Notes: An RNA of 177 nucleotides, treated with 2A3 and DMS and read out base by base. Values are in units of 0.01, from 0 to 300, in steps of 10. Conditions: 150 mM KOAc, 10 mM MgCl2 and 150 mM bicine (pH 8.5), 24 C. It was measured as part of the RMDB library OK1LIB.
RNA sequence: GGGAACGACUCGAGUAGAGUCGAAAAGAAAAGAGCGUAAUCGCGUCUUGACGUGAGUGAGACUAGACUGUAGGCUAUCCCAAGUGGGAUAGGAUAUCUCACAAUACGCUGAUCUACAGUCAAAAGACGUGCCGAUUUUAUUCGUAAAAUCGGCACGAAAAGAAACAACAACAACAAC
Reactivity to 2A3 in 0.01 (KOAc 150mM, MgCl2 10mM, bicine 150mM(pH8.5), 24C), signal-to-noise 3, nucleotides 027 to 126: g140a010a050a000a020g030a010g000c000g000u010a070a020u040c000g000c000g020u010c050u140u300g110a030c000g010u010g000a010g020u000g000a000g000a020c010u020a100g000a000c010u000g000u010a000g010g000c020u010a000u010c000c030c000a110a070g300u300g050g000g000a000u000a000g010g000a040u030a020u090c000u000c000a000c000a010a020u050a000c000g000c000u020g010a050u020c000u000a000c000a030g010u000c000a000a000a000a030g110a040
Reactivity to DMS in 0.01 (KOAc 150mM, MgCl2 10mM, bicine 150mM(pH8.5), 24C), signal-to-noise 1, nucleotides 027 to 126: g000a130a040a070a060g000a070g000c000g000u000a010a300u000c000g000c000g000u040c090u060u020g010a120c010g020u030g000a070g030u000g000a050g020a000c070u040a070g000a000c000u000g040u000a000g020g080c010u000a000u100c000c000c000a230a300g000u020g000g000g000a000u040a000g030g080a180u000a050u000c000u010c060a000c000a090a300u030a000c020g000c030u000g000a030u050c000u060a050c000a020g000u000c000a100a060a030a110g000a110